[RMDB]
RNA sequence: GGGAACGACUCGAGUAGAGUCGAAAAUCAGCACAGUCCUUCCAGAGUAAGCCUAUUGCUCAUUGCCCUUAGAGGUGAUACGUUUGUCUCACUCAGCUAAUAACAAGCCUUUUACAACAGAGACCACCAUGAGUUGGUGUGGAAGUGGGUGACACUAACCGUAAUUAAAUUUCGAUUUAAUUACGGUAAAAGAAACAACAACAACAAC
Reactivity to 2A3 in 0.01 (KOAc 150mM, MgCl2 10mM, bicine 150mM(pH8.5), 24C), signal-to-noise 9, nucleotides 027 to 156: u080c010a000g040c010a020c010a030g050u050c010c010u070u030c030c020a030g010a030g060u070a080a030g020c020c040u100a080u070u090g020c020u020c030a060u030u090g020c010c000c010u060u100a030g010a070g080g020u030g010a020u030a080c080g030u030u100u120g030u010c000u010c010a040c020u050c030a030g010c050u060a080a060u120a240a130c080a090a020g010c000c010u060u120u100u130a090c080a170a000c010a060g050a000g010a060c000c020a000c000c000a020u060g020a030g180u100u060g020g020u050g020u050g050g020a040a020g010u070g040g040g010u030g030a020c020a000c100u040a040
Reactivity to DMS in 0.01 (KOAc 150mM, MgCl2 10mM, bicine 150mM(pH8.5), 24C), signal-to-noise 5, nucleotides 027 to 156: u000c040a080g030c030a080c050a150g020u000c030c020u000u010c030c020a260g010a070g030u000a040a120g010c020c030u000a110u010u010g020c040u010c080a090u000u000g010c000c020c030u000u020a110g020a090g020g030u000g010a040u000a070c060g030u000u000u000g010u010c020u000c020a070c030u010c040a110g000c030u000a080a100u000a060a070c070a070a100g010c020c030u000u010u000u010a110c090a090a140c050a090g010a090g010a080c000c020a030c020c020a100u000g010a130g020u000u000g010g020u000g010u000g010g000a040a120g020u000g010g020g010u010g000a100c030a050c060u000a150
About this RNA
Source: RMDB library OK3TST, as collected in RNAgym. Chemical mapping of a 207-nucleotide RNA with 2A3 and DMS. 2A3 adducts were read by reverse transcription with SuperScript II with manganese. For DMS the reverse transcriptase was MarathonRT. DMS (dimethyl sulfate) methylates the pairing face of unpaired adenines and cytosines. For DMS, 12,729 sequencing reads were counted. Values cover nucleotides 27 to 156. The 2A3 profile rests on 8,347 reads.